[RMDB]
RNA sequence: GGGAACGACUCGAGUAGAGUCGAAAACUUGCAGGUAUGUGGAUCCUGGUAGUAGUAGCAGCAAAGUGAGGUGAGAAUCCUUACCGCCGGAGGGGCUAGGGUUCCUUGGCAAUGUUCGUCAGCCAAGGGCUUUCUGUUAGUUCGCUAACAGAAAGCCAAAAGAAACAACAACAACAAC
Reactivity to 2A3 in 0.01 (KOAc 150mM, MgCl2 10mM, bicine 150mM(pH8.5), 24C), signal-to-noise 2, nucleotides 027 to 126: c020u000u110g010c030a030g030g090u150a110u170g080u100g030g000a040u070c010c020u030g050g000u000a010g020u010a000g000u010a000g020c070a000g000c010a020a090a080g040u020g020a000g000g030u020g000a040g050a020a020u020c000c010u000u010a020c000c020g020c020c000g020g020a050g000g020g010g000c020u060a030g030g010g000u050u040c020c000u030u010g020g000c020a000a090u010g010u010u070c080g060u080c130a080g220c070c010a030a030g030
Reactivity to DMS in 0.01 (KOAc 150mM, MgCl2 10mM, bicine 150mM(pH8.5), 24C), signal-to-noise 2, nucleotides 027 to 126: c040u000u000g030c010a050g000g050u000a050u010g010u000g020g010a050u020c020c020u000g000g000u000a070g030u020a040g050u020a060g000c020a060g000c080a050a060a140g000u030g000a010g020g010u000g000a240g010a090a090u000c000c000u000u010a030c020c100g000c050c080g020g010a090g020g010g000g030c040u010a040g000g000g000u000u030c040c020u000u000g000g000c040a070a050u010g000u010u020c110g010u010c120a170g000c000c000a040a060g030